[RMDB]
RNA sequence: GGGAACGACUCGAGUAGAGUCGAAAAGAUAUGGAGAUACGCAACAGCGUAUGUAUCGGAAACGAUACUACGACAUGCGUACUCCUAAGUCAAAACCAGGCUAAACACUUCGGUGUUUAGCCUGGAACAGGUACAGUGACUUCGGUCACUGUACCUGAAAAGAAACAACAACAACAAC
Reactivity to DMS in 0.01 (KOAc 150mM, MgCl2 10mM, bicine 150mM(pH8.5), 24C), signal-to-noise 1, nucleotides 027 to 126: g000a050u010a150u030g030g000a000g000a240u000a000c000g040c010a010a150c300a160g030c000g000u000a010u000g010u000a000u010c000g030g020a030a060a130c000g000a010u000a000c000u000a000c000g020a110c140a160u000g000c010g000u000a050c000u010c010c010u000a000a070g000u010c010a150a030a080a190c010c010a010g010g000c000u000a000a000a010c000a040c010u000u010c220g000g010u000g000u000u000u000a000g010c000c000u000g000g000a010a020
Reactivity to 2A3 in 0.01 (KOAc 150mM, MgCl2 10mM, bicine 150mM(pH8.5), 24C), signal-to-noise 1, nucleotides 027 to 126: g010a020u020a010u090g010g000a020g070a140u010a010c000g000c000a050a040c070a300g120c020g000u000a040u300g000u000a010u000c000g010g020a030a000a000c000g000a000u000a000c010u000a000c000g220a090c060a070u000g020c000g000u000a000c000u000c010c000u000a040a000g040u020c030a040a040a090a130c010c000a000g010g030c000u040a000a010a000c020a000c010u100u200c300g170g010u000g060u000u000u000a010g000c010c000u010g000g010a000a010